[RMDB]
Structure probing data (DMS) for a 177-nucleotide construct.
The DMS profile rests on 769 reads.
The data come from the RNA Mapping Database (RMDB), library OK2TRN.
Values cover nucleotides 27 to 126.
RNA sequence: GGGAACGACUCGAGUAGAGUCGAAAAGGAGUCAAUGGCAUAGAACUCUAUGCAAAUAGUAAGGGACAUGAUGCCACAUGGGGAGAUCACAAUCUGACUGUAGGACCUGCUGUAUCCAUAAAGCCUAUCUAGGGUUCUGAUUCGUCAGAACCCUAGAAAAAGAAACAACAACAACAAC
Reactivity to DMS in 0.01 (KOAc 150mM, MgCl2 10mM, bicine 150mM(pH8.5), 24C), signal-to-noise 1, nucleotides 027 to 126: g010g030a060g010u000c060a060a090u000g010g010c020a000u000a000g000a260a200c280u030c010u020a040u010g030c080a010a130a040u020a040g020u000a060a050g000g000g030a100c200a070u010g000a030u000g020c050c030a030c050a100u040g010g030g000g020a070g000a080u000c090a080c150a050a030u010c050u000g010a060c060u000g020u020a000g010g010a070c100c050u000g000c060u020g010u000a110u010c040c060a030u000a100a030a060g020c020c020u010a060